[RMDB]
RNA sequence: GGGAACGACUCGAGUAGAGUCGAAAACAGCGAGAGGCGUAGGAGAGAGGGCCGCGGUGCUCUGGAGUAGAGGCUUCUUGCUUCGAAACACCAUCGAUCGUCCCUUCUUCUUUACCUCCUCCUGGCUUCUCUAUAAAAUGUUCGCAUUUUAUAGAGAAAAAGAAACAACAACAACAAC
Reactivity to DMS in 0.01 (KOAc 150mM, MgCl2 10mM, bicine 150mM(pH8.5), 24C), signal-to-noise 2, nucleotides 027 to 126: c010a030g000c200g010a040g020a010g000g010c110g000u000a020g020g000a020g010a080g000a050g000g000g030c090c010g030c020g010g010u000g010c010u000c020u000g000g000a100g010u000a080g000a030g000g010c000u010u010c280u010u000g000c010u000u000c000g000a150a140a130c020a000c200c000a020u000c010g000a110u030c010g000u000c010c010c000u000u000c010u000u000c000u000u000u000a050c010c000u000c080c030u000c040c010u000g010g000c100u000
Reactivity to 2A3 in 0.01 (KOAc 150mM, MgCl2 10mM, bicine 150mM(pH8.5), 24C), signal-to-noise 3, nucleotides 027 to 126: c020a000g020c060g070a040g000a010g060g010c080g050u030a000g030g010a020g000a000g030a020g000g000g000c020c010g030c010g030g010u000g000c000u020c000u010g000g000a010g000u000a000g000a000g000g020c010u200u060c070u240u300g000c000u010u000c000g020a010a010a010c010a020c090c030a000u010c000g070a300u020c000g010u000c000c000c020u010u010c000u000u010c000u040u040u040a030c000c000u010c030c020u000c010c010u020g090g000c050u060